[RMDB]
Chemical mapping of a 207-nucleotide RNA with DMS and 2A3.
DMS adducts were read by reverse transcription with MarathonRT.
For DMS, 2,719 sequencing reads were counted.

RNA sequence: GGGAACGACUCGAGUAGAGUCGAAAAGCGUACUACUUCACGCACAAGCGACGACGUACAUGACCCGAUAGUCCCAAAUAGGACUAUCGCAUGUACAUCAGCUUGUGAUGUGAAGUAUCGCAAAAGAUUAAUGCCAGCUUCGGCUGGCAUUAAUCAACCCAUACUAGGAGUUCGCUCCUAGUAUGGGAAAAGAAACAACAACAACAAC
Reactivity to DMS in 0.01 (KOAc 150mM, MgCl2 10mM, bicine 150mM(pH8.5), 24C), signal-to-noise 1, nucleotides 027 to 156: g000c010g050u010a030c090u010a030c000u000u010c000a000c000g010c000a020c010a000a020g050c000g000a160c140g040a010c030g050u000a020c060a000u000g010a150c250c140c150g000a000u000a000g120u010c010c000c020a070a230a300u010a090g030g020a010c000u000a010u000c020g040c010a010u000g000u020a010c000a040u000c010a200g030c000u000u010g040u000g010a060u010g030u000g020a030a000g010u000a000u010c020g040c000a080a070a140a190g030a020u000u000a020a010u000g020c000c000a010g030c000u000u000c300g030g040c000u000g020g000c020a000u000u000a010a000u000c000a040a090
Reactivity to 2A3 in 0.01 (KOAc 150mM, MgCl2 10mM, bicine 150mM(pH8.5), 24C), signal-to-noise 4, nucleotides 027 to 156: g010c010g030u090a100c020u000a000c000u030u000c000a000c010g020c000a000c000a000a000g000c020g210a190c110g010a000c010g070u000a000c000a010u040g050a170c080c070c020g000a010u000a000g000u000c010c010c030a210a300a070u300a160g000g000a000c000u000a000u010c000g000c010a000u000g000u000a000c000a020u010c010a010g010c000u000u000g000u020g010a140u090g000u000g000a000a000g010u010a000u020c000g000c010a000a040a050a080g000a000u000u000a000a000u000g000c000c000a010g000c030u060u140c250g080g000c000u010g000g000c000a000u000u000a000a000u000c000a000a010